[RMDB]
RNA sequence: GGGAACGACUCGAGUAGAGUCGAAAACAAAACAAACAAAGAUGAUGUCUCCUUACCGUUAUCAAUGGAGGCAAACUCGCACAUGGCGAAGGUGGGAACGAUGACGGUAAUGCCACCAUAAAACAAAGAGCUACGUACUGUUCGCAGUACGUAGCUCAAAAGAAACAACAACAACAAC
Reactivity to 2A3 in 0.01 (KOAc 150mM, MgCl2 10mM, bicine 150mM(pH8.5), 24C), signal-to-noise 1, nucleotides 027 to 126: c010a050a120a000a000c140a130a090a000c100a030a150a030g110a050u220g000a000u010g000u000c000u000c060c000u010u090a070c000c000g060u020u050a040u040c070a070a150u170g010g000a010g010g000c000a030a000a030c000u000c000g020c000a020c050a210u240g140g000c010g130a040a030g070g000u000g000g050g000a070a040c030g000a000u060g000a010c010g030g000u130a050a000u100g000c000c000a030c020c040a100u160a000a060a000a000c050a020a290a040